An RNA of 177 nucleotides, treated with DMS and 2A3 and read out base by base. The reactions ran in a buffer of 150 mM KOAc, 10 mM MgCl2 and 150 mM bicine (pH 8.5), at 24 C. The 2A3 profile rests on 1,793 reads. For 2A3 the reverse transcriptase was SuperScript II with manganese.
[RMDB]
RNA sequence: GGGAACGACUCGAGUAGAGUCGAAAAGGACAAGAAUCAGGUUUAAAGAUGACAGUUCAUUUGAAGAUGUGAAUGGAAUCCGAAGACCCAAGCAUCUAUAUGUGUCCAUGCCUACUGCACAAUCAAACACGGCAUAAAAUUUCGAUUUUAUGCCGUGAAAAGAAACAACAACAACAAC
Reactivity to DMS in 0.01 (KOAc 150mM, MgCl2 10mM, bicine 150mM(pH8.5), 24C), signal-to-noise 4, nucleotides 027 to 126: g010g010a050c000a050a060g000a120a100u000c110a120g010g010u010u000u000a060a230a110g010a040u000g010a150c070a060g010u000u010c010a040u000u000u000g030a130a120g010a060u010g000u000g000a020a020u000g010g000a120a020u000c010c010g000a270a070g000a030c010c000c090a110a150g010c130a040u000c050u000a080u010a060u000g010u000g010u000c010c030a090u010g010c010c000u000a100c160u000g030c080a060c180a050a070u010c110a100a070a120
Reactivity to 2A3 in 0.01 (KOAc 150mM, MgCl2 10mM, bicine 150mM(pH8.5), 24C), signal-to-noise 2, nucleotides 027 to 126: g030g010a010c030a060a030g060a050a070u100c040a050g030g000u000u060u160a090a050a000g000a020u030g010a010c010a070g100u000u020c010a030u040u120u260g200a140a070g110a130u150g020u020g060a000a010u030g010g000a010a020u050c010c010g000a030a020g020a010c000c050c000a020a030g080c000a010u000c040u120a060u010a040u250g110u000g040u040c000c000a020u040g040c010c000u090a080c040u150g040c070a080c020a120a090u140c030a000a090a020